[RMDB]
RNA sequence: GGGAACGACUCGAGUAGAGUCGAAAAAUAAAAUGUGCGUCCCUCGCGAAGCUGCGCGCUCGGUCGAAGAGGACGACCAUCGCCGAUAGAGGACGACCGGUCUUCGGUCAAGGGAAAAAGAAAAAAACCUAUUAUUUCCGUUCGCGGAAAUAAUAGGAAAAGAAACAACAACAACAAC
Reactivity to 2A3 in 0.01 (KOAc 150mM, MgCl2 10mM, bicine 150mM(pH8.5), 24C), signal-to-noise 1, nucleotides 027 to 126: a000u220a020a070a000a050u070g060u000g000c010g040u000c030c000c000u000c000g000c010g060a090a040g020c040u120g060c040g020c010g000c140u020c050g050g190u070c010g040a130a010g080a100g070g010a000c040g030a010c000c000a020u080c050g000c010c010g040a080u160a100g110a010g090g050a010c060g010a010c030c000g030g060u070c160u190u170c050g000g010u010c020a010a040g000g000g000a080a180a000a120a000g080a010a080a050a020a130a010a000
Reactivity to DMS in 0.01 (KOAc 150mM, MgCl2 10mM, bicine 150mM(pH8.5), 24C), signal-to-noise 1, nucleotides 027 to 126: a070u010a080a050a050a030u010g000u000g010c060g000u000c000c010c000u020c070g000c030g010a020a020g030c030u010g030c140g030c160g000c010u010c070g030g030u010c030g000a000a070g000a090g020g000a050c030g010a040c050c000a040u000c100g010c050c090g000a100u000a070g000a070g010g000a070c090g030a130c060c090g020g030u010c070u000u000c010g040g000u000c050a080a080g000g000g010a040a030a050a140a120g000a040a010a030a050a070a090a200
About this RNA:
Structure probing data (2A3 and DMS) for a 177-nucleotide construct. Reactivities are rounded to 0.1 and cut off at 0 and 3.